[RMDB]
Notes:
The record gives the reactivity of an RNA of 177 nucleotides to DMS and 2A3.
RNA sequence: GGGAACGACUCGAGUAGAGUCGAAAAGAUAUGGAUGGUACCCGCUCGAUAAGUCCCGUGUCGGAAACGACAUUGGACUUUUGACGAGCGGUACCAUCCUAAGUCAAAAGCUCUGUUCGCAGAGCAAUCCUUAAUCUUCGUUCGCGAAGAUUAAGGAAAAAGAAACAACAACAACAAC
Reactivity to DMS in 0.01 (KOAc 150mM, MgCl2 10mM, bicine 150mM(pH8.5), 24C), signal-to-noise 2, nucleotides 027 to 126: g010a050u010a300u020g000g020a000u000g010g000u010a020c120c030c080g040c010u000c010g020a160u000a010a020g000u010c000c000c060g000u000g040u000c000g000g000a060a100a180c020g000a020c000a000u000u010g010g010a030c010u000u000u000u010g010a220c130g010a000g020c020g000g030u010a000c000c000a000u000c000c010u020a010a060g000u010c040a090a090a130a210g020c000u000c000u000g000u020u020c160g010c020a000g010a020g020c010a070a040
Reactivity to 2A3 in 0.01 (KOAc 150mM, MgCl2 10mM, bicine 150mM(pH8.5), 24C), signal-to-noise 2, nucleotides 027 to 126: g010a020u050a010u160g000g060a010u020g000g000u020a010c120c250c140g000c000u000c020g170a070u040a270a010g000u020c000c010c010g000u020g010u030c010g000g020a100a080a090c010g000a000c000a010u000u020g010g020a000c000u020u000u010u100g190a090c060g000a000g000c030g010g010u000a010c000c010a000u010c000c000u020a000a000g000u010c020a000a000a100a130g000c010u000c020u010g070u150u160c300g030c150a000g000a010g000c010a000a020
Conditions: 150 mM KOAc, 10 mM MgCl2 and 150 mM bicine (pH 8.5), 24 C. DMS adducts were read by reverse transcription with MarathonRT.